RNA sequence: GGGAACGACUCGAGUAGAGUCGAAAAACGACUAGGUAUACGUACCUAGUCGAACCCAGGGCUUACGCCCUAGGCUAUUUCACGUCGCCCCUCCGGGGCUACGGAGUCCGAUACGUCGGACUCCGAAAAUAGCGCCAACAUUCGUGUUGGCGCUAUUAAAAGAAACAACAACAACAAC
Reactivity to 2A3 in 0.01 (KOAc 150mM, MgCl2 10mM, bicine 150mM(pH8.5), 24C), signal-to-noise 1, nucleotides 027 to 126: a000c040g000a000c000u000a000g040g020u000a030u010a020c230g070u070a030c010c010u000a000g000u000c000g000a000a000c000c000c000a010g000g060g000c070u240u300a100c230g020c000c000c000u000a040g050g000c020u100a150u070u140u140c030a030c090g060u080c070g000c000c060c000c000u170c090c100g040g100g000g000c030u040a030c010g000g000a000g000u000c030c000g020a000u010a040c210g120u010c000g000g030a000c000u000c000c000g000a010a010